[RMDB]
RNA sequence: GGGAACGACUCGAGUAGAGUCGAAAAACUGAGAUAUGCAGUACAGAUGCUAUUAGUCUGCGAAUUGAUAUGACUUUCAACGUACGAAUAUCACGGCCUGAACAGCAUAAGCUUUAUUAGCGAACCAUGAAGUUACUCUAUUCGUAGAGUAACUUCAAAAAGAAACAACAACAACAAC
Reactivity to 2A3 in 0.01 (KOAc 150mM, MgCl2 10mM, bicine 150mM(pH8.5), 24C), signal-to-noise 3, nucleotides 027 to 126: a000c040u040g040a020g000a040u040a010u040g010c030a000g010u000a010c010a010g050a050u060g030c000u020a040u100u080a070g010u000c000u010g020c030g060a150a130u090u030g040a040u050a060u190g070a050c020u030u070u040c050a080a030c050g030u050a010c060g020a040a020u030a000u100c040a020c060g010g000c000c000u010g000a010a000c010a000g010c000a030u010a090a010g000c000u000u090u030a090u050u060a040g030c000g020a010a000c010c000a010
Reactivity to DMS in 0.01 (KOAc 150mM, MgCl2 10mM, bicine 150mM(pH8.5), 24C), signal-to-noise 6, nucleotides 027 to 126: a110c070u000g000a080g010a060u000a020u000g010c060a080g010u010a070c050a080g000a110u010g010c080u000a070u010u010a040g010u000c010u000g000c080g010a090a120u000u000g010a070u000a060u000g010a120c110u000u000u000c060a060a140c090g020u000a020c070g000a070a060u000a030u000c070a080c070g010g010c030c000u000g000a040a030c090a040g000c030a030u000a050a090g000c020u000u000u000a080u020u000a050g000c040g000a070a100c050c080a110
An RNA of 177 nucleotides, treated with 2A3 and DMS and read out base by base. The RNA was probed in 150 mM KOAc, 10 mM MgCl2 and 150 mM bicine (pH 8.5) at 24 C. The 2A3 profile rests on 4,262 reads.